[RMDB]
RNA sequence: GGGAACGACUCGAGUAGAGUCGAAAAGCAUUAUUGGAGCAAAAGCAAACUAAUACAAACGUUAGUGUAAUUCCUUUGCUUGUGAUUGAUUUAGAGAUGAAUAUUUGUCCUGUUUCCAGGUAAUACAAUGUAUUUAGGAAGAAUGCCAAAGGAGGGACGCUAUCGUAAAUUUCGAUUUACGAUAGCGAAAAGAAACAACAACAACAAC
Reactivity to 2A3 in 0.01 (KOAc 150mM, MgCl2 10mM, bicine 150mM(pH8.5), 24C), signal-to-noise 7, nucleotides 027 to 156: g010c010a020u030u070a030u080u160g040g020a020g020c030a030a050a050a010g030c020a060a100a030c020u030a020a050u140a110c130a090a130a020c100g010u030u040a030g010u030g030u110a080a080u070u050c000c000u020u030u030g010c000u040u030g040u080g060a120u080u040g030a040u020u040u200a050g010a020g020a080u080g050a110a050u070a100u110u080u090g030u050c000c010u030g030u080u140u000c070c010a000g020g020u060a060a030u080a080c050a050a050u150g030u050a070u060u120u070a020g010g000a000a040g010a060a040u070g010c010c020a040a010a020g030g010a010g000g020g000a010
Reactivity to DMS in 0.01 (KOAc 150mM, MgCl2 10mM, bicine 150mM(pH8.5), 24C), signal-to-noise 4, nucleotides 027 to 156: g030c030a070u010u000a070u000u000g020g000a060g050c030a040a070a050a090g000c080a060a140a060c020u000a020a080u000a300c050a100a110a110c190g000u010u010a040g030u010g010u000a090a180u000u000c030c030u000u000u000g010c020u000u000g000u000g010a100u010u000g010a070u000u000u000a080g020a110g010a090u010g000a080a100u000a100u000u000u000g020u000c030c060u000g020u000u000u000c020c040a090g010g030u010a040a060u000a070c050a050a120u000g010u000a070u010u000u000a100g010g010a060a090g000a090a080u010g000c040c040a020a050a090g020g010a110g020g000g020a140